An RNA of 177 nucleotides, treated with 2A3 and DMS and read out base by base.

RNA sequence: GGGAACGACUCGAGUAGAGUCGAAAAGAUAUGGACACUCGUGAAGGCGAAGAACUCGGAAACGAGGGAGCCUUACACGAGGUGUCCUAAGUCAAAACUUCACGCUAUGUUCGCAUAGCGUGAAGAAUCUUAUUCUCCCGUUCGCGGGAGAAUAAGAAAAAGAAACAACAACAACAAC
Reactivity to 2A3 in 0.01 (KOAc 150mM, MgCl2 10mM, bicine 150mM(pH8.5), 24C), signal-to-noise 2, nucleotides 027 to 126: g000a030u080a020u130g000g000a010c000a010c020u010c000g000u010g020a000a010g020g000c000g180a300a030g020a080a050c000u000c010g020g070a100a070a030c010g000a000g010g030g010a000g000c010c000u000u090a110c010a000c000g010a010g000g010u000g010u000c000c000u000a090a000g030u010c040a000a010a130a190c020u000u000c000a000c010g000c000u000a000u020g020u050u090c240g030c130a000u020a000g000c000g010u010g000a010a000g000a000a010
Reactivity to DMS in 0.01 (KOAc 150mM, MgCl2 10mM, bicine 150mM(pH8.5), 24C), signal-to-noise 3, nucleotides 027 to 126: g000a040u010a300u000g000g000a030c000a060c010u010c000g030u000g020a050a010g010g010c020g000a090a150g010a120a170c010u000c000g000g010a130a120a180c000g000a020g000g000g000a100g010c000c000u000u000a050c010a010c010g000a010g020g020u000g010u000c000c010u000a000a060g000u000c040a120a080a080a120c000u000u000c000a010c000g010c010u000a000u000g000u000u000c220g030c010a010u000a010g020c000g020u010g000a000a000g000a060a080

The data come from the RNA Mapping Database (RMDB), library TTRDEL.